[RMDB]
RNA sequence: GGGAACGACUCGAGUAGAGUCGAAAAAGAAUAUACAUCAACUGAGAAAUAUAAUGGCAAGACUGGUUUCAACACACAUUCGACAUAAUGAGUUGUCUAAAUUGACUGAGCAACAACUUGUGAUUCAGAAUUCUCUUCCUUUCGAGGAAGAGAAUUCAAAAGAAACAACAACAACAAC
Reactivity to DMS in 0.01 (KOAc 150mM, MgCl2 10mM, bicine 150mM(pH8.5), 24C), signal-to-noise 2, nucleotides 027 to 126: a060g010a100a100u020a000u000a030c050a090u030c130a080a090c120u020g050a060g010a050a000a040u020a040u060a100a030u020g030g050c060a100a200g000a040c000u000g020g000u000u000u000c130a010a090c070a090c130a060c140a070u010u000c080g020a100c200a040u090a080a040u040g100a050g010u000u000g000u000c000u020a020a040a050u000u040g020a070c000u000g000a110g000c090a010a040c110a060a060c080u010u040g000u000g000a120u080u000c130a060
Reactivity to 2A3 in 0.01 (KOAc 150mM, MgCl2 10mM, bicine 150mM(pH8.5), 24C), signal-to-noise 4, nucleotides 027 to 126: a000g130a070a030u150a020u030a100c020a090u130c030a030a070c040u090g030a020g190a160a230a030u300a050u090a030a170u040g080g000c000a000a110g020a080c060u090g020g010u040u090u090c030a090a000c040a000c060a000c020a100u000u050c040g030a000c050a050u140a050a090u250g040a030g110u080u030g020u000c090u080a040a100a130u210u120g050a050c030u080g020a010g050c000a030a040c000a010a000c010u070u030g030u070g060a150u160u050c010a000